[RMDB]
RNA sequence: GGGAACGACUCGAGUAGAGUCGAAAAGUGGUCGAGUGCGAAGCACUGGGGUAGAGAAAUAAAGAGAGAGAGAUCUGCCCCGUCAGUCAGUCACUCUCUGUCUGAAUCUCUCUCUCAAAGACCACGAAAUAGGGUACGCAUUCGUGCGUACCCUAUUAAAAGAAACAACAACAACAAC
Reactivity to DMS in 0.01 (KOAc 150mM, MgCl2 10mM, bicine 150mM(pH8.5), 24C), signal-to-noise 3, nucleotides 027 to 126: g020u000g010g020u000c000g020a030g010u000g000c040g000a160a130g030c000a000c010u020g020g010g000g040u000a030g000a040g000a020a050a040u030a060a130a020g020a020g000a020g000a010g000a010g000a240u020c110u000g000c010c000c100c100g010u010c130a040g000u000c000a020g000u020c200a090c080u010c020u000c000u000g000u000c020u000g000a160a120u000c050u000c000u000c010u000c000u000c040a010a040a090g000a020c000c000a000c000g000a070
Reactivity to 2A3 in 0.01 (KOAc 150mM, MgCl2 10mM, bicine 150mM(pH8.5), 24C), signal-to-noise 3, nucleotides 027 to 126: g000u000g000g000u000c000g030a010g020u030g020c090g180a210a040g040c020a000c040u030g000g010g030g030u150a010g020a000g110a050a200a020u230a040a160a000g040a000g000a010g000a000g000a000g000a100u040c030u020g010c000c040c030c010g030u040c000a020g000u020c020a000g010u100c060a080c050u040c020u020c020u050g140u030c000u000g010a040a050u000c000u000c000u000c000u000c010u000c020a000a000a000g010a010c000c000a000c000g000a010